[RMDB]
RNA sequence: GGGAACGACUCGAGUAGAGUCGAAAAGAUAUGGAUGCCGAGAGCUAGAAUUCUCGGAAACGAGAUUCUUGGACCUCUCUUUGGGCAUCCUAAGUCAAAGCAAGAGAUGGUUCGCCAUCUCUUGCAAGUACCGAUAUUUCUUCGGAAAUAUCGGUACAAAAGAAACAACAACAACAAC
Reactivity to 2A3 in 0.01 (KOAc 150mM, MgCl2 10mM, bicine 150mM(pH8.5), 24C), signal-to-noise 2, nucleotides 027 to 126: g000a000u010a000u090g000g010a000u000g010c000c020g010a000g000a000g030c020u050a010g020a040a070u300u140c000u000c000g000g090a010a000a000c000g000a000g000a000u020u020c000u180u230g300g150a300c000c030u050c010u000c000u070u100u120g060g030g000c000a000u000c000c000u000a010a000g000u000c030a140a090a000g000c000a000a010g010a010g000a010u010g000g080u040u200c270g090c060c010a000u020c010u010c000u000u000g000c000a000a000
Reactivity to DMS in 0.01 (KOAc 150mM, MgCl2 10mM, bicine 150mM(pH8.5), 24C), signal-to-noise 2, nucleotides 027 to 126: g010a010u000a150u010g000g010a020u000g000c000c000g000a010g010a020g010c030u000a020g000a030a020u000u000c000u010c000g010g010a010a010a050c000g010a010g000a020u000u000c000u000u010g030g010a140c300c040u000c010u000c010u000u000u010g020g010g010c000a000u000c000c000u000a000a090g000u000c020a110a100a130g010c000a010a010g000a020g010a020u000g000g000u000u000c300g020c010c000a010u000c000u000c000u010u000g010c010a000a030
The record gives the reactivity of an RNA of 177 nucleotides to 2A3 and DMS. For DMS, 2,614 sequencing reads were counted. For 2A3, 4,082 sequencing reads were counted. DMS adducts were read by reverse transcription with MarathonRT.